About this RNA
The record gives the reactivity of an RNA of 207 nucleotides to DMS and 2A3. 2A3 adducts were read by reverse transcription with SuperScript II with manganese. For DMS the reverse transcriptase was MarathonRT. For 2A3, 7,852 sequencing reads were counted. The reactions ran in a buffer of 150 mM KOAc, 10 mM MgCl2 and 150 mM bicine (pH 8.5), at 24 C.
[RMDB]
RNA sequence: GGGAACGACUCGAGUAGAGUCGAAAACAGCUGGUGCCGAAAUGGCAGGAAUGCCUAACUCGCCACCUUCUAUGGCGAUCGGUACUAACGUCAUAGUACAGGCGCGUAAUGCAUCGGUAGUAACACAAUGGGCUUACACGGUCAGUAAUGCUCACAGCUACUGAAUUUCGUUCGCGAAAUUCAGUAGAAAAGAAACAACAACAACAAC
Reactivity to DMS in 0.01 (KOAc 150mM, MgCl2 10mM, bicine 150mM(pH8.5), 24C), signal-to-noise 2, nucleotides 027 to 156: c040a200g000c020u000g010g050u000g000c020c020g000a070a150a120u010g010g000c000a020g030g020a160a200u000g000c000c000u000a100a140c150u000c030g030c000c000a040c040c030u010u000c050u000a040u010g000g000c000g020a120u000c060g000g040u000a090c030u000a070a080c040g030u010c030a060u000a050g030u000a070c100a070g010g010c040g030c040g000u000a080a080u000g000c040a070u000c010g030g010u010a060g010u000a050a090c090a100c060a120a040u000g010g000g020c040u010u000a030c050a120c060g000g040u010c080a130g020u000a030a060u010g040c010u000c030a040c030a120g010
Reactivity to 2A3 in 0.01 (KOAc 150mM, MgCl2 10mM, bicine 150mM(pH8.5), 24C), signal-to-noise 7, nucleotides 027 to 156: c020a010g030c020u030g010g010u020g010c020c010g030a050a080a100u100g000g030c020a020g000g150a110a080u060g000c000c010u040a060a030c030u010c050g010c010c020a080c030c000u060u020c020u020a020u020g000g000c010g060a110u090c120g140g130u240a140c070u080a070a020c000g010u020c010a010u000a020g020u060a050c060a090g000g000c010g000c010g040u040a070a040u110g020c010a010u010c000g020g000u030a050g040u080a140a030c090a000c030a130a150u100g010g000g000c000u010u020a010c050a020c090g220g060u110c040a030g010u030a010a020u280g000c010u000c020a060c040a010g050

For DMS, 4,761 sequencing reads were counted.